RNA sequence: GGGAACGACUCGAGUAGAGUCGAAAACAACAGCGUAAUCGCGUCUUGACGUGAUCGAGUUACGAUUGACUGAAUGCUAACUAUAUUGUCUGUCAUAGACAAUACGCUGUUCUAAUGACAGUGAUACGAUAUAGUUGUAUUUCGAUAUGACUAUAUCAAAAGAAACAACAACAACAAC
Reactivity to DMS in 0.01 (KOAc 150mM, MgCl2 10mM, bicine 150mM(pH8.5), 24C), signal-to-noise 9, nucleotides 027 to 126: c130a060a070c040a020g010c010g000u020a040a040u000c030g010c080g000u000c050u020u020g010a030c020g020u000g010a040u000c180g010a040g010u000u000a030c060g000a070u020u020g010a110c120u020g020a090a050u010g000c100u020a020a020c030u010a090u030a040u000u000g010u000c000u000g010u030c140a060u030a010g000a010c000a020a030u010a020c050g010c040u000g000u000u000c090u020a070a070u020g000a080c060a020g010u020g010a100u020a060c130
Reactivity to 2A3 in 0.01 (KOAc 150mM, MgCl2 10mM, bicine 150mM(pH8.5), 24C), signal-to-noise 9, nucleotides 027 to 126: c020a000a000c000a000g020c000g010u020a040a050u050c030g010c010g060u010c050u060u160g090a020c010g050u040g010a040u050c040g020a010g020u030u030a030c030g010a060u050u170g130a110c050u080g080a070a060u100g040c040u050a020a020c010u010a020u020a030u130u060g060u040c030u030g100u060c030a040u090a100g000a000c000a010a010u030a030c010g000c020u010g000u020u000c010u060a120a120u090g050a020c010a020g060u030g090a060u050a150c050
This 177-nucleotide RNA was probed chemically with DMS and 2A3. High DMS reactivity at an A or C suggests that its Watson-Crick edge is free. For 2A3 the reverse transcriptase was SuperScript II with manganese. For DMS the reverse transcriptase was MarathonRT. For 2A3, 53,887 sequencing reads were counted. The reactions ran in a buffer of 150 mM KOAc, 10 mM MgCl2 and 150 mM bicine (pH 8.5), at 24 C.